[RMDB]
RNA sequence: GGGAACGACUCGAGUAGAGUCGAAAAGUUGGCUGAGUUUGACACUUAUGACCCUAUUUAUAAGAAUGGUGCCAUGUAUAAAGGCAAACCAAUUCUUUGGGUCAAUAAAGCAUCUUAUGAUACUAAUUACCCGUAAACUUCGGUUUACGGAAAAGAAACAACAACAACAAC
Reactivity to DMS in 0.01 (KOAc 150mM, MgCl2 10mM, bicine 150mM(pH8.5), 24C), signal-to-noise 4, nucleotides 027 to 129: g000u020u030g000g000c100u030g000a220g030u030u040u010g010a120c100a040c070u030u000a130u030g000a050c020c000c010u040a080u030u040u030a110u070a040a040g020a020a030u020g000g000u030g000c000c000a130u120g000u060a160u030a050a080a070g020g030c020a050a120a080c010c010a030a100u020u000c000u000u040u000g000g010g000u000c010a000a000u070a050a040a020g030c120a170u010c010u000u000a030u060g030a120u030a070c020u000a090a060u010u020a100c200
Reactivity to 2A3 in 0.01 (KOAc 150mM, MgCl2 10mM, bicine 150mM(pH8.5), 24C), signal-to-noise 7, nucleotides 027 to 129: g020u010u020g060g010c090u070g010a020g070u020u050u100g090a060c060a040c040u050u030a020u040g000a010c010c000c000u020a110u090u300u020a270u070a020a000g000a000a000u010g000g010u010g000c000c020a020u120g160u100a120u100a130a140a070g000g000c000a120a070a100c020c000a050a230u010u030c000u040u020u040g000g000g000u000c000a000a020u030a000a020a000g000c020a020u010c000u020u070a110u140g090a040u020a050c030u040a080a110u070u070a060c010